[RMDB]
RNA sequence: GGGAACGACUCGAGUAGAGUCGAAAACAACAACCUGUUGAUAGCGAGAGUUCGACGACGUCGGCAUCAACGAGGAGUGGUUCUUUCGUAUCGACACCGAUUUUGACAGUUGCCAAUAGUGAACCAAUAAAUCGUGAUGGUUCGCCAUCACGAUUUAAAAAGAAACAACAACAACAAC
Reactivity to 2A3 in 0.01 (KOAc 150mM, MgCl2 10mM, bicine 150mM(pH8.5), 24C), signal-to-noise 2, nucleotides 027 to 126: c030a000a010c020a000a110c030c010u030g000u040u020g010a030u020a030g180c030g020a030g020a000g040u060u070c040g080a020c010g030a040c050g260u100c000g020g050c090a140u130c050a060a030c000g020a010g040g030a060g000u050g050g020u020u010c000u040u000u030c010g020u020a020u070c010g030a020c030a020c070c050g110a120u040u040u070u270g070a040c000a050g010u030u030g110c040c000a080a090u080a110g150u100g090a030a020c000c000a030a010
Reactivity to DMS in 0.01 (KOAc 150mM, MgCl2 10mM, bicine 150mM(pH8.5), 24C), signal-to-noise 2, nucleotides 027 to 126: c060a140a070c080a030a120c040c060u000g020u010u000g010a010u010a060g070c000g000a030g000a060g030u000u000c030g020a020c030g030a120c090g000u010c020g000g020c120a090u000c160a070a040c000g000a120g010g000a240g000u000g010g010u000u000c020u000u010u000c000g000u000a070u010c000g000a030c010a070c090c060g010a120u000u000u000u000g010a070c160a080g010u000u010g030c020c080a030a070u000a100g010u020g000a080a100c060c030a050a140
Overview: Source: RMDB library OK2TST, as collected in RNAgym. This 177-nucleotide RNA was probed chemically with 2A3 and DMS. DMS adducts were read by reverse transcription with MarathonRT. For 2A3, 1,426 sequencing reads were counted.